Structure probing data (2A3 and DMS) for a 177-nucleotide construct. Source: RMDB library TTRDEL, as collected in RNAgym. Conditions: 150 mM KOAc, 10 mM MgCl2 and 150 mM bicine (pH 8.5), 24 C. The DMS profile rests on 6,588 reads.

[RMDB]
RNA sequence: GGGAACGACUCGAGUAGAGUCGAAAAGAUAUGGAACCGGUUGGGAGCGAGAUCGGAAACGAUGUCGCUUUGAUCAAUUGGUUCCUAAGUCAAAACACUGGUCUGUUGUUCGCAACAGACCAGUGAAGUACUAGUAGGUGUUCGCACCUACUAGUACAAAAGAAACAACAACAACAAC
Reactivity to 2A3 in 0.01 (KOAc 150mM, MgCl2 10mM, bicine 150mM(pH8.5), 24C), signal-to-noise 3, nucleotides 027 to 126: g010a020u060a030u100g000g000a000a000c000c010g010g000u010u000g050g040g000a000g000c010g010a010g000a050u020c020g000g040a030a040a020c010g000a000u020g160u250c010g010c020u030u040u040g020a040u030c000a000a020u010u010g000g000u000u000c000c000u000a010a010g020u010c020a020a010a090a110c010a000c000u010g000g010u000c000u010g000u020u020g040u090u100c300g030c160a000a010c000a000g000a000c000c000a010g000u000g000a010a010
Reactivity to DMS in 0.01 (KOAc 150mM, MgCl2 10mM, bicine 150mM(pH8.5), 24C), signal-to-noise 4, nucleotides 027 to 126: g000a030u000a300u000g000g000a000a010c000c000g010g010u000u010g000g010g000a000g010c010g010a020g010a010u000c000g000g010a070a100a130c000g010a000u000g000u000c000g000c000u000u000u010g010a110u000c000a010a020u000u000g010g000u000u000c000c000u000a010a070g020u000c030a080a090a130a200c000a000c000u000g000g000u000c000u010g010u000u000g000u000u010c230g010c000a020a010c000a010g000a010c000c000a000g010u000g000a010a090